[RMDB]
RNA sequence: GGGAACGACUCGAGUAGAGUCGAAAAAUCGCGUUGGUGACAGAUGUGUAGGUGACGGUGUCGAGGUCGAUGUACAGAUGCAUGCCGCUCUGAGGGGUUUCGACCUCGCGGUAGAUCUCGUGGUAGUCGCUCACUCGAACGACCUCGGUGAAGGGGGGGGUAAUCAGUAUUUCGAUACUGAUUACCCAAAAGAAACAACAACAACAAC
Reactivity to DMS in 0.01 (KOAc 150mM, MgCl2 10mM, bicine 150mM(pH8.5), 24C), signal-to-noise 1, nucleotides 027 to 156: a110u010c050g000c090g010u000u000g020g050u020g030a090c040a100g010a090u000g000u010g030u000a140g000g040u000g000a080c090g000g000u000g060u010c010g010a050g020g020u000c020g030a100u010g030u000a220c090a110g020a090u010g030c090a180u000g020c030c050g010c060u000c080u010g000a020g020g010g010g000u000u000u000c160g010a060c010c000u000c040g040c020g000g010u000a090g000a100u000c040u010c020g000u010g050g060u000a100g010u020c040g000c010u030c020a090c030u010c050g000a050a100c030g000a020c020c010u000c030g020g010u000g000a070a080g020g040g000g030g010
Reactivity to 2A3 in 0.01 (KOAc 150mM, MgCl2 10mM, bicine 150mM(pH8.5), 24C), signal-to-noise 2, nucleotides 027 to 156: a000u060c050g000c030g060u050u090g000g000u030g000a010c030a080g060a060u030g030u000g030u120a040g000g020u010g010a020c010g070g060u050g020u050c000g000a010g010g000u010c010g030a040u070g030u070a020c030a020g020a060u120g030c040a010u090g030c040c030g020c050u060c150u110g040a060g020g050g040g000u000u120u100c060g020a040c000c020u020c030g000c000g000g020u030a030g010a090u010c030u020c070g050u080g070g000u010a060g050u000c010g020c000u010c010a050c010u030c010g020a030a010c010g040a040c000c010u030c020g000g000u070g050a020a030g010g000g000g010g000